[RMDB]
RNA sequence: GGGAACGACUCGAGUAGAGUCGAAAACUGCCGCCGGGACGCAGUGAUCCUCGCAGGGUCGCACGGUCGCCUCGGGUCGGCCUCGUGUCGGCUCGACCUGCGGGGGGAGCGAGUGGCGAGCCCGACCAAAACUUUCUCGCCUUCGGGCGAGAAAGAACUAGUGAUACCACUUCGGUGGUAUCACUAGAAAAGAAACAACAACAACAAC
Reactivity to 2A3 in 0.01 (KOAc 150mM, MgCl2 10mM, bicine 150mM(pH8.5), 24C), signal-to-noise 2, nucleotides 027 to 156: c000u000g010c000c000g010c000c000g060g050g150a100c010g010c010a140g260u000g000a000u000c010c000u020c000g030c000a010g000g010g120u180c040g050c090a060c070g050g000u020c010g030c010c040u000c000g020g000g020u010c000g000g020c000c000u130c150g290u300g000u010c000g000g020c010u020c050g050a100c000c000u000g000c000g000g000g000g000g000g000a010g000c010g000a060g070u080g010g010c000g000a030g040c030c050c040g010a010c010c020a090a010a040a010c000u000u000u000c000u000c000g020c010c020u000u040c190g090g000g000c010g000a000g010a000a030a000g000a000a020